RNA sequence: GGGAACGACUCGAGUAGAGUCGAAAAGUCAGCACGUCGCCCGGCCGCAUCGCCUCCCUACGCCGCAGCGGUGCGUCGCGCCACAAUCCGUUCGAAUAGAUCCGCACGGUUUCCGACGAGCCGGUGGACCACUGAUCCUGUUCGCAGGAUCAGUGGUAAAAGAAACAACAACAACAAC
Reactivity to DMS in 0.01 (KOAc 150mM, MgCl2 10mM, bicine 150mM(pH8.5), 24C), signal-to-noise 2, nucleotides 027 to 126: g000u000c030a060g000c030a060c090g020u000c040g000c060c040c030g040g000c020c040g000c040a070u010c080g000c000c080u000c010c010c020u010a100c070g000c020c010g020c040a100g020c040g020g020u010g020c060g020u000c060g030c130g000c040c040a050c120a090a040u000c020c030g030u000u000c020g000a020a110u010a130g000a120u000c050c000g060c030a090c030g010g010u000u000u000c030c040g000a120c120g010a090g010c000c030g000g010u000g000g010